[RMDB]
RNA sequence: GGGAACGACUCGAGUAGAGUCGAAAAGCUUUAGCUGCUUAAUAACCAGCUAGCGUGAUCCUUCCGACUUCGCUCAAGGGUCGGGUCUGGGUCUCAAAUUAUUGAGCUACGGUUAAUGUUGCCACCUGAGGCAUUAACAAGAGACUAGUAGGUUAGCCACCGUCUAUUAGUUCGCUAAUAGACGGUGAAAAGAAACAACAACAACAAC
Reactivity to 2A3 in 0.01 (KOAc 150mM, MgCl2 10mM, bicine 150mM(pH8.5), 24C), signal-to-noise 4, nucleotides 027 to 156: g000c010u120u160u110a010g000c000u020g000c010u050u070a040a020u070a050a050c030c000a000g000c000u020a010g000c030g110u080g020a040u040c010c000u020u040c010c000g000a000c000u020u020c080g000c000u000c000a000a020g000g000g000u000c000g010g010g030u090c160u120g000g000g010u010c020u000c120a110a180a060u290u200a120u070u000g000a000g000c010u000a000c010g000g000u010u000a000a000u000g000u010u010g000c010c020a010c000c010u000g000a000g000g010c000a000u000u000a000a000c010a010a000g010a020g090a050c080u050a070g120u020a010g010g010u020u070a040g070c040
Reactivity to DMS in 0.01 (KOAc 150mM, MgCl2 10mM, bicine 150mM(pH8.5), 24C), signal-to-noise 2, nucleotides 027 to 156: g000c020u000u010u000a060g030c000u000g000c040u000u000a170a150u000a190a120c210c010a060g050c040u000a030g010c080g020u010g000a060u000c000c000u010u000c000c010g020a030c010u000u000c060g040c000u000c020a050a080g020g000g010u000c020g000g020g000u000c040u000g040g020g010u010c020u000c040a090a130a130u000u010a070u010u000g030a040g000c030u000a300c030g030g000u000u000a020a020u010g010u010u000g010c020c030a120c020c010u020g010a300g010g000c020a000u000u000a000a040c000a010a080g000a280g010a060c130u010a060g050u000a050g010g030u000u000a110g000c090
An RNA of 207 nucleotides, treated with 2A3 and DMS and read out base by base. The reactions ran in a buffer of 150 mM KOAc, 10 mM MgCl2 and 150 mM bicine (pH 8.5), at 24 C. For 2A3 the reverse transcriptase was SuperScript II with manganese. It was measured as part of the RMDB library ARCHII.